Record summary:
Source: RMDB library TTRDES, as collected in RNAgym. The record gives the reactivity of an RNA of 177 nucleotides to DMS and 2A3. For DMS the reverse transcriptase was MarathonRT. The RNA was probed in 150 mM KOAc, 10 mM MgCl2 and 150 mM bicine (pH 8.5) at 24 C.

[RMDB]
RNA sequence: GGGAACGACUCGAGUAGAGUCGAAAAAAAGAUAUGGAUAAACUGGAGCCUAUGGAGCACGAAGAACGCUUUCGGAAACGAAAGCGGGAGUGUGACAUAGGCUAUGAAGGUUUAUCCUAAGUCAAAACAUAAGUAGGAACUUCGGUUCCUACUUAUGAAAAGAAACAACAACAACAAC
Reactivity to DMS in 0.01 (KOAc 150mM, MgCl2 10mM, bicine 150mM(pH8.5), 24C), signal-to-noise 3, nucleotides 027 to 126: a060a080a110g000a030u010a300u010g000g000a000u000a000a020a010c000u000g000g010a000g000c010c000u000a000u000g000g010a300g000c000a010c000g000a130a160g010a100a220c010g000c000u000u000u000c000g020g000a140a100a180c000g000a000a010a000g010c000g000g000g000a040g000u000g000u000g000a300c010a000u000a000g010g010c000u010a010u000g010a120a190g000g000u000u010u000a000u000c000c010u000a010a050g000u000c040a070a080a080a220
Reactivity to 2A3 in 0.01 (KOAc 150mM, MgCl2 10mM, bicine 150mM(pH8.5), 24C), signal-to-noise 1, nucleotides 027 to 126: a000a000a050g040a030u120a050u170g000g020a000u010a000a030a000c010u030g090g000a020g030c000c000u000a000u020g010g000a030g030c010a000c000g060a190a120g020a120a020c010g030c030u020u000u000c030g010g040a080a060a040c020g000a000a010a010g000c020g000g000g000a040g020u020g000u040g030a000c000a000u010a000g000g000c000u010a010u010g010a000a000g000g010u000u000u000a000u000c000c000u000a010a020g010u000c020a000a020a090a190

The DMS profile rests on 4,348 reads.